The data come from the RNA Mapping Database (RMDB), library TTRINS. Chemical mapping of a 177-nucleotide RNA with 2A3 and DMS. DMS adducts were read by reverse transcription with MarathonRT.
[RMDB]
RNA sequence: GGGAACGACUCGAGUAGAGUCGAAAAGAUAUGGACGUGUGAACUACUAAUCGAUGCGUCGAAGAACACAUACAAUCGGAAACGAUUGUAUGUGGGAGACGGGCAGAUUAGCACACGUCCUAAGUCAUCUUCUCCUAAACUUCGGUUUAGGAGAAGAAAAAGAAACAACAACAACAAC
Reactivity to 2A3 in 0.01 (KOAc 150mM, MgCl2 10mM, bicine 150mM(pH8.5), 24C), signal-to-noise 2, nucleotides 027 to 126: g030a040u110a040u160g020g000a000c000g020u040g020u010g050a050a100c100u270a040c000u000a300a000u020c040g130a180u270g300c000g010u050c020g060a160a080g030a030a000c020a000c010a000u000a020c000a030a010u000c010g040g000a060a070a050c030g000a000u020u000g000u000a010u000g000u000g000g000g010a160g010a010c020g010g220g180c090a060g030a020u010u010a000g000c000a000c000a000c000g000u060c000c010u010a000a000g020u000c000a020
Reactivity to DMS in 0.01 (KOAc 150mM, MgCl2 10mM, bicine 150mM(pH8.5), 24C), signal-to-noise 3, nucleotides 027 to 126: g010a040u000a300u000g000g020a000c000g030u000g030u010g010a120a040c080u020a300c010u000a000a000u000c010g000a200u020g010c010g010u000c000g000a100a110g000a300a240c010a000c010a010u000a000c000a000a000u000c020g000g000a060a070a140c000g000a020u000u000g000u000a000u000g010u000g000g010g010a160g000a040c000g000g000g020c270a260g000a000u000u000a000g000c030a000c010a000c000g000u010c000c000u010a010a080g010u000c020a100